[RMDB]
RNA sequence: GGGAACGACUCGAGUAGAGUCGAAAAAACGGGAACAUUGCGUGGUGGGUAGUUUGACUGGGGUGGUCGCCUCCAAAAGAGUAACGGAGGCUUCUAAAGGUUCCCUCAGAACGGUCGGCAAUCGUUCUAAUUACAAAUACUUCGGUAUUUGUAAUUAAAAAGAAACAACAACAACAAC
Reactivity to DMS in 0.01 (KOAc 150mM, MgCl2 10mM, bicine 150mM(pH8.5), 24C), signal-to-noise 9, nucleotides 027 to 126: a060a060c110g010g000g000a060a040c050a100u020u010g010c160g010u030g000g010u030g000g000g000u000a060g010u010u020u020g010a080c110u010g020g010g000g010u000g000g020u000c090g000c000c000u000c010c000a040a080a090a180g010a190g000u030a100a100c230g010g010a020g000g010c010u000u000c020u000a040a090a070g000g000u000u010c010c000c000u020c150a050g000a020a020c020g000g010u000c090g010g010c140a080a050u010c010g000u000u000c020
Reactivity to 2A3 in 0.01 (KOAc 150mM, MgCl2 10mM, bicine 150mM(pH8.5), 24C), signal-to-noise 9, nucleotides 027 to 126: a000a010c070g000g010g010a060a010c050a110u100u150g030c040g050u100g020g050u150g050g020g010u040a100g100u040u090u190g100a110c080u060g000g000g010g000u050g020g010u020c020g000c020c000u000c000c020a100a140a030a020g140a030g060u080a050a030c050g000g000a000g010g000c000u020u010c020u040a070a060a000g020g000u010u020c000c000c000u010c010a010g000a020a000c000g010g040u070c050g060g040c060a020a030u030c000g000u020u000c010

Conditions: 150 mM KOAc, 10 mM MgCl2 and 150 mM bicine (pH 8.5), 24 C. The record gives the reactivity of an RNA of 177 nucleotides to DMS and 2A3. High DMS reactivity at an A or C suggests that its Watson-Crick edge is free.